[RMDB]
RNA sequence: GGGAACGACUCGAGUAGAGUCGAAAAGAGGCUUCCAUAAAGCCAAGACAGGAUCAACGUGUAGAGGCAUAUCAUCCACAUUAGUACAUUUCGUCAGAGUAUACUGGUGAUUCCGUUAGGAGAAAUAAAAAUACCAGGAAAGCAUUCAAAGGUAUUAGAGUAGCAAUUGCUUCGGCGAUUGCUGCUCAAAAGAAACAACAACAACAAC
Reactivity to DMS in 0.01 (KOAc 150mM, MgCl2 10mM, bicine 150mM(pH8.5), 24C), signal-to-noise 4, nucleotides 027 to 156: g030a220g020g010c010u000u000c050c180a130u010a120a090a070g010c010c010a050a120g010a140c070a080g010g010a130u000c030a060a090c060g020u000g030u000a070g020a070g020g010c050a090u000a060u000c050a090u010c020c030a070c030a040u000u000a050g020u000a030c030a060u010u000u000c040g050u000c120a150g000a090g020u000a060u000a040c000u000g000g030u000g010a100u000u000c020c030g000u000u000a130g000g000a110g010a060a060a110u030a030a120a080a050a070u000a050c010c010a120g010g010a070a050a110g010c050a060u000u000c060a030a100a140g000g020u000a060u000u000a190
Reactivity to 2A3 in 0.01 (KOAc 150mM, MgCl2 10mM, bicine 150mM(pH8.5), 24C), signal-to-noise 7, nucleotides 027 to 156: g120a030g020g000c020u050u030c050c010a080u160a120a090a000g010c010c010a010a000g050a020c030a020g030g020a060u060c050a040a090c070g010u030g040u080a030g020a050g060g000c030a040u050a020u110c030a030u040c030c020a030c010a080u060u060a020g030u060a030c020a090u070u080u100c070g040u050c040a010g010a000g110u070a040u030a120c010u020g010g010u030g040a080u080u000c030c030g040u050u090a040g000g030a050g060a020a080a020u160a030a060a020a010a010u030a020c010c000a000g020g070a040a050a010g020c020a010u090u140c060a120a040a020g020g050u080a030u140u150a050